Structure probing data (2A3 and DMS) for a 177-nucleotide construct. The RNA was probed in 150 mM KOAc, 10 mM MgCl2 and 150 mM bicine (pH 8.5) at 24 C. DMS adducts were read by reverse transcription with MarathonRT. Values cover nucleotides 27 to 126. High DMS reactivity at an A or C suggests that its Watson-Crick edge is free. For DMS, 1,328 sequencing reads were counted. The 2A3 profile rests on 2,472 reads.
[RMDB]
RNA sequence: GGGAACGACUCGAGUAGAGUCGAAAAGGCUCCCACUUCGGUGGGAGCCAAAGCUGAACGCGCAGCAUGCGUUAAACAUGGAAAAACGCACGUCCAAUGCGCAAAGCUUCCCCUUCGGGGGAAGCAACGUUCUCAACAAGUUCGCUUGUUGAGAACGAAAAGAAACAACAACAACAAC
Reactivity to 2A3 in 0.01 (KOAc 150mM, MgCl2 10mM, bicine 150mM(pH8.5), 24C), signal-to-noise 2, nucleotides 027 to 126: g020g030c000u010c000c030c010a000c010u030u050c210g080g000u000g030g030g020a000g010c010c000a000a020a000g010c020u030g070a060a010c040g010c000g010c010a010g010c010a020u030g000c010g040u030u050a180a280a000c060a160u210g140g000a190a000a000a000a030c010g020c000a000c000g040u020c040c060a070a100u080g000c000g020c000a040a040a040g010c000u000u010c040c000c000c000u020u130c190g010g020g000g000g020a010a000g000c010a000a020
Reactivity to DMS in 0.01 (KOAc 150mM, MgCl2 10mM, bicine 150mM(pH8.5), 24C), signal-to-noise 2, nucleotides 027 to 126: g000g020c010u000c010c000c000a020c010u000u000c180g010g000u010g000g010g010a010g020c010c000a000a030a060g000c150u000g020a110a120c200g030c030g050c030a040g020c010a060u000g000c000g000u010u000a010a100a170c100a140u000g000g000a120a050a070a100a010c000g010c020a010c060g000u000c070c110a100a120u000g000c000g010c000a040a030a110g000c000u000u000c000c000c000c000u000u020c130g020g050g000g000g000a000a000g000c000a020a040